[RMDB]
This 170-nucleotide RNA was probed chemically with 2A3 and DMS. 2A3 adducts were read by reverse transcription with SuperScript II with manganese. The RNA was probed in 150 mM KOAc, 10 mM MgCl2 and 150 mM bicine (pH 8.5) at 24 C. The 2A3 profile rests on 5,013 reads. Reactivities are given for positions 27 through 129.
RNA sequence: GGGAACGACUCGAGUAGAGUCGAAAACGCCCCCGGGCGCUCCCCUCGAUCCACCUUCGAGGGGGUUCACACCCCCAGUCGGCGGGCCGGCUACUCUUCUUUUCCUUUCCUCGUCCUCCCCGGUCAGCAAUCGACAGCUUCGGCUGUCGAAAAAGAAACAACAACAACAAC
Reactivity to 2A3 in 0.01 (KOAc 150mM, MgCl2 10mM, bicine 150mM(pH8.5), 24C), signal-to-noise 2, nucleotides 027 to 129: c040g060c010c000c000c000c010g000g000g000c010g000c000u050c020c000c000c000u000c010g040a050u040c060c010a080c030c040u030u010c010g010a150g020g000g000g020g010u060u050c020a040c010a020c030c000c000c000c000a020g030u050c000g040g000c000g010g030g010c030c000g000g000c000u050a060c040u000c000u050u040c000u000u020u080u060c000c000u000u080u030c000c000u010c000g050u000c000c000u000c000c000c000c020g010g030u050c030a040g040c050a040a110
Reactivity to DMS in 0.01 (KOAc 150mM, MgCl2 10mM, bicine 150mM(pH8.5), 24C), signal-to-noise 3, nucleotides 027 to 129: c080g010c030c010c020c120c080g020g020g020c090g040c110u020c000c010c020c080u020c040g030a060u010c000c000a110c070c040u010u040c010g090a210g000g000g000g000g000u040u020c140a130c140a240c090c020c030c000c020a090g030u020c080g010g030c100g000g000g000c000c000g000g000c070u020a060c070u050c030u040u000c020u000u000u000u000c040c070u000u000u000c030c020u070c060g020u030c020c040u000c020c040c000c010g010g050u000c030a100g050c120a050a090